Source: RMDB library RFM100, as collected in RNAgym.
Structure probing data (DMS and 2A3) for a 177-nucleotide construct.
For DMS the reverse transcriptase was MarathonRT.
Conditions: 150 mM KOAc, 10 mM MgCl2 and 150 mM bicine (pH 8.5), 24 C.
[RMDB]
RNA sequence: GGGAACGACUCGAGUAGAGUCGAAAAGUCGGCAAAACCGAUCUGUAACUUCGGGAUAAGGAUUGGCUCUAAAGGUUGGUAGAGUGGACAUUGUAGAGCCUAGAUCAGGGGGUGAGUUUGUAGAGCGUAAUAAGGGGUGCUUCGGCACCCCUUAUUAAAAAGAAACAACAACAACAAC
Reactivity to DMS in 0.01 (KOAc 150mM, MgCl2 10mM, bicine 150mM(pH8.5), 24C), signal-to-noise 3, nucleotides 027 to 126: g060u010c020g000g020c130a110a050a130a300c020c010g000a010u020c110u000g010u010a050a100c080u010u030c070g010g000g000a140u020a120a120g000g000a100u000u000g000g000c010u000c030u000a030a110a060g000g030u000u000g000g020u020a070g000a160g040u030g000g000a060c080a050u000u000g000u020a010g020a050g020c020c010u010a040g000a050u000c040a070g000g000g010g000g020u000g000a040g000u010u010u010g000u000a060g010a110g010c140g020
Reactivity to 2A3 in 0.01 (KOAc 150mM, MgCl2 10mM, bicine 150mM(pH8.5), 24C), signal-to-noise 2, nucleotides 027 to 126: g090u030c010g030g040c010a000a030a050a210c010c000g000a010u050c030u000g060u050a080a090c000u020u070c110g020g000g000a040u060a110a050g000g070a080u070u080g000g000c000u070c000u080a030a090a000g040g000u050u060g080g090u120a060g000a060g130u050g000g010a000c040a070u020u070g090u080a000g000a010g000c000c000u050a050g020a040u050c060a030g000g000g000g030g010u060g020a050g020u030u080u040g090u090a070g010a010g060c040g010